The data come from the RNA Mapping Database (RMDB), libraries RFM100 and RFMREP. An RNA of 177 nucleotides, treated with DMS and 2A3 and read out base by base. In probing experiments dimethyl sulfate is read out at A N1 and C N3, which are open when not base-paired. For 2A3 the reverse transcriptase was SuperScript II with manganese. The reactions ran in a buffer of 150 mM KOAc, 10 mM MgCl2 and 150 mM bicine (pH 8.5), at 24 C.
RNA sequence: GGGAACGACUCGAGUAGAGUCGAAAAGAAAGAAAGCACUGAGGUGUAGAGGUAGCCUCUCCUAGGCUUUGUCUGUGAAUUUGGCCGAGACAUAGCCUGAUUGAGGCUAACUUUAGCCUUAGCACAAAAGGCAUAGAACUUUCGAGUUCUAUGCCUUAAAAGAAACAACAACAACAAC
Reactivity to DMS in 0.01 (KOAc 150mM, MgCl2 10mM, bicine 150mM(pH8.5), 24C), signal-to-noise 3, nucleotides 027 to 126: g010a040a140a120g020a110a150a100g030c160a200c050u000g010a000g000g030u010g000u020a010g000a000g010g010u000a010g010c000c000u000c000u000c150c060u010a030g010g000c010u000u000u000g000u000c000u000g030u050g030a100a170u030u050u040g020g040c100c110g000a050g040a000c010a010u000a000g010c030c000u000g000a040u040u000g000a000g000g000c000u000a010a010c000u000u000u000a070g000c000c020u010u000a010g010c150a090c210a070a080
Reactivity to 2A3 in 0.01 (KOAc 150mM, MgCl2 10mM, bicine 150mM(pH8.5), 24C), signal-to-noise 5, nucleotides 027 to 126: g070a020a060a000g060a010a110a010g090c080a020c090u040g000a000g030g030u200g170u210a020g000a000g000g040u020a000g020c000c000u020c010u020c000c040u040a000g000g000c000u000u050u010g000u000c000u000g210u080g140a230a280u110u090u240g180g040c100c050g010a000g000a000c000a010u010a000g000c000c000u040g030a140u010u050g020a000g000g010c000u020a030a000c000u000u000u010a000g000c010c000u000u000a010g000c040a010c040a070a160